[RMDB]
RNA sequence: GGGAACGACUCGAGUAGAGUCGAAAAAUUGAGAGGGUUUGGGAUCUUCUUAGUGUAGACAAUGGGAAUGUCUCAUCUUUAGCCACCUUGGUCUUUCUCUUUCUCUCUUGUAGAUAUCUUCCAUGCCAGUACUUUGCUUCCUUUGCCUCUGGGCACGCAACUUCCAAAACUUCGGUUUUGGAAGUUGAAAAGAAACAACAACAACAAC
Reactivity to 2A3 in 0.01 (KOAc 150mM, MgCl2 10mM, bicine 150mM(pH8.5), 24C), signal-to-noise 2, nucleotides 027 to 156: a010u100u150g010a030g010a010g000g040g030u020u060u100g030g000g030a020u040c040u120u000c010u080u090a040g010u050g010u110a030g020a040c080a090a070u080g040g020g080a060a130u100g050u020c000u010c010a110u040c010u040u100u110a050g000c030c020a060c030c030u020u070g000g000u020c020u040u080u010c000u000c000u020u050u020c020u000c000u000c000u010u040g080u090a040g010a100u050a050u170c040u080u000c020c000a040u070g040c000c060a060g030u050a060c030u120u060u050g050c030u070u050c000c000u080u020u090g020c000c020u060c040u070g030g040g000c030a010c030g030